[RMDB]
RNA sequence: GGGAACGACUCGAGUAGAGUCGAAAAGGACUACCCGUCAGGGUUAAGGCCAUACGGACAGCCGGGUCCACUGCCACAAAGAAAACAAAACAAAACAAAAACAAAACAAAACAAAAACAAAAGAAAAGAUCAUCAUGGAUUUCGAUCCAUGAUGAUCAAAAGAAACAACAACAACAAC
Reactivity to 2A3 in 0.01 (KOAc 150mM, MgCl2 10mM, bicine 150mM(pH8.5), 24C), signal-to-noise 4, nucleotides 027 to 126: g030g010a030c020u040a050c020c000c020g070u130c130a130g000g040g010u050u070a030a080g030g020c010c000a040u060a070c060g050g030a020c010a020g040c000c000g010g000g000u000c000c030a010c040u040g050c020c010a070c060a030a100a020g160a050a130a010a010c100a010a080a040a010c060a040a060a040a010c150a070a070a040a060a010c040a010a090a010a000c040a010a090a020a010c050a010a090a030a000a010c060a030a110a050a010g150a040a090a020a000
Reactivity to DMS in 0.01 (KOAc 150mM, MgCl2 10mM, bicine 150mM(pH8.5), 24C), signal-to-noise 1, nucleotides 027 to 126: g020g000a050c030u000a030c060c040c000g000u000c120a060g050g000g000u000u070a090a080g000g000c000c060a120u000a110c180g000g010a020c050a050g000c050c000g070g000g000u000c000c100a060c160u020g000c000c030a010c300a120a080a030g000a030a200a000a000c250a060a090a150a020c240a020a120a050a170c200a020a150a000a000a170c000a060a000a120a180c050a050a110a020a050c060a170a250a000a000a260c080a120a050a120a300g010a080a010a100a000